Notes: Structure probing data (2A3 and DMS) for a 177-nucleotide construct. 2A3 adducts were read by reverse transcription with SuperScript II with manganese. For DMS, 541 sequencing reads were counted. The RNA was probed in 150 mM KOAc, 10 mM MgCl2 and 150 mM bicine (pH 8.5) at 24 C. Values are in units of 0.01, from 0 to 300, in steps of 10.
RNA sequence: GGGAACGACUCGAGUAGAGUCGAAAAGGAUAUAUCUCCCUCUACCUGGAUAUACAUUAGUACUGUGAAGCAUGGAACUAGACUAUGAGGGAUGCUUCCACAAACAUAUACCAACUUCCUUGUUAGAGCCCUAAUGAGGUUUCGACCUCAUUAGGGCAAAAGAAACAACAACAACAAC
Reactivity to 2A3 in 0.01 (KOAc 150mM, MgCl2 10mM, bicine 150mM(pH8.5), 24C), signal-to-noise 1, nucleotides 027 to 126: g000g020a000u030a020u020a050u170c020u040c040c010c000u050c020u000a010c010c010u000g080g000a030u050a020u010a120c120a110u130u110a040g020u020a080c060u050g120u040g130a030a020g030c030a010u030g140g050a010a020c000u020a060g150a170c080u150a120u300g050a130g010g000g010a010u030g000c000u030u000c060c000a020c000a020a180a000c080a010u070a010u030a140c030c000a040a060c080u040u070c000c010u040u010g010u070u010a040g010a000
Reactivity to DMS in 0.01 (KOAc 150mM, MgCl2 10mM, bicine 150mM(pH8.5), 24C), signal-to-noise 1, nucleotides 027 to 126: g000g010a210u010a120u000a080u000c210u020c000c020c000u020c040u000a050c090c020u000g020g030a090u020a090u010a020c180a120u000u000a030g010u000a130c080u000g000u000g000a030a010g000c020a010u010g040g010a150a100c050u000a070g010a100c300u000a080u000g000a060g010g000g000a040u010g020c040u010u010c050c070a020c190a030a110a090c160a050u010a060u000a100c090c050a050a070c260u000u000c010c000u010u000g010u000u030a020g030a180